This 177-nucleotide RNA was probed chemically with DMS and 2A3.
RNA sequence: GGGAACGACUCGAGUAGAGUCGAAAAUGCAAUGAGCAAUCCGAUAUUAUCCUCAGCUGCAGGCUGAAGAUGAGCAGCUCACCACCCCCAGCUUCUGAACACCUGCCAAGUGAGCCAGGUGGAGGGCGCUACUAAGGCUAUUCGUAGCCUUAGUAGCAAAAGAAACAACAACAACAAC
Reactivity to DMS in 0.01 (KOAc 150mM, MgCl2 10mM, bicine 150mM(pH8.5), 24C), signal-to-noise 5, nucleotides 027 to 126: u000g020c070a110a070u000g010a030g010c010a160a080u010c060c080g010a130u010a080u010u010a020u000c000c020u010c010a030g010c010u010g030c300a090g010g020c010u000g010a010a000g010a020u000g000a020g000c120a130g000c010u000c000a060c090c050a170c030c000c010c010c040a130g020c070u000u000c020u010g000a120a220c020a030c010c000u010g010c120c040a180a150g000u020g010a080g020c180c040a020g000g000u000g010g010a110g000g000g020c170
Reactivity to 2A3 in 0.01 (KOAc 150mM, MgCl2 10mM, bicine 150mM(pH8.5), 24C), signal-to-noise 3, nucleotides 027 to 126: u060g010c050a000a110u050g000a010g010c000a030a140u080c040c060g040a050u070a080u230u060a020u030c010c000u000c000a010g000c000u240g110c090a140g170g000c000u010g010a010a000g010a010u030g010a030g000c070a030g020c010u000c010a070c220c020a040c030c020c000c000c010a010g020c030u180u090c010u060g020a050a000c000a000c020c000u020g010c020c000a240a130g150u120g120a010g030c050c030a010g000g000u030g020g000a090g020g010g000c010

Source: RMDB library OK2TRN, as collected in RNAgym.
The RNA was probed in 150 mM KOAc, 10 mM MgCl2 and 150 mM bicine (pH 8.5) at 24 C.
For 2A3 the reverse transcriptase was SuperScript II with manganese.
High 2A3 reactivity points to a flexible backbone, as in loops and unpaired stretches.